[RMDB]
RNA sequence: GGGAACGACUCGAGUAGAGUCGAAAAGCUUCACGGAUGGGGGACAUGUGGCUUGGUCAUGACAGGGUGUUACAUACCAGGACAGACUGUGUUCGGGUGACAUUAAGGACAAGCUCCUGCAGGCUAGAUAUCUCGUCGGAUUCGUCCGACGAGAUAUAAAAGAAACAACAACAACAAC
Reactivity to DMS in 0.01 (KOAc 150mM, MgCl2 10mM, bicine 150mM(pH8.5), 24C), signal-to-noise 2, nucleotides 027 to 126: g000c040u000u000c050a060c100g020g000a030u010g010g010g010g000g000a110c070a100u000g050u000g020g000c040u000u000g000g020u000c080a080u000g000a090c040a070g040g030g030u000g010u000u010a090c170a110u000a260c050c020a130g000g000a020c090a050g000a140c090u000g010u030g020u000u000c070g000g000g000u000g010a070c090a080u030u010a070a100g010g000a050c070a060a120g020c100u010c050c000u000g010c080a080g000g000c060u000a070g010
This 177-nucleotide RNA was probed chemically with DMS. The data come from the RNA Mapping Database (RMDB), library OK2TRN. In probing experiments dimethyl sulfate is read out at A N1 and C N3, which are open when not base-paired. The DMS profile rests on 1,366 reads.